[RMDB]
RNA sequence: GGGAACGACUCGAGUAGAGUCGAAAAGACCCCAGCUCGGCAAGGGCUCGUAUGGGAAGGUGUACCGGGGAACGUGGCAGGGCAAGAGGGUGGCAGUGAAAGUGGUGGACGAUGCGGACAAGGUGCACACUUGAGAUCAGUUCGCUGAUCUCAAGUGAAAAGAAACAACAACAACAAC
Reactivity to 2A3 in 0.01 (KOAc 150mM, MgCl2 10mM, bicine 150mM(pH8.5), 24C), signal-to-noise 2, nucleotides 027 to 126: g050a020c000c000c000c010a010g000c030u060c030g090g010c170a120a100g050g050g000c050u030c040g070u070a120u150g030g020g060a040a070g020g020u060g000u090a060c030c000g010g010g050g000a090a040c030g050u080g030g010c070a020g000g000g030c090a070a100g050a050g030g000g020u040g020g040c050a080g020u030g130a100a070a050g080u080g060g050u060g030g000a010c060g020a040u080g000c030g000g020a030c020a060a040g070g000u040g000c000a020
Reactivity to DMS in 0.01 (KOAc 150mM, MgCl2 10mM, bicine 150mM(pH8.5), 24C), signal-to-noise 3, nucleotides 027 to 126: g000a280c100c000c000c090a140g000c020u000c050g000g010c120a140a080g010g020g010c030u000c080g030u010a060u000g000g000g010a130a070g000g020u000g000u020a090c090c060g010g000g000g020a120a080c080g000u010g010g020c100a060g000g020g000c060a050a070g020a070g020g000g000u000g010g020c070a050g010u020g000a040a080a090g010u000g000g010u000g000g010a050c100g010a090u000g010c080g010g010a080c090a080a080g010g020u010g020c110a130

Source: RMDB library OK2TRN, as collected in RNAgym. This 177-nucleotide RNA was probed chemically with 2A3 and DMS. The reactions ran in a buffer of 150 mM KOAc, 10 mM MgCl2 and 150 mM bicine (pH 8.5), at 24 C. Reactivities are given for positions 27 through 126. For DMS the reverse transcriptase was MarathonRT. The DMS profile rests on 2,060 reads.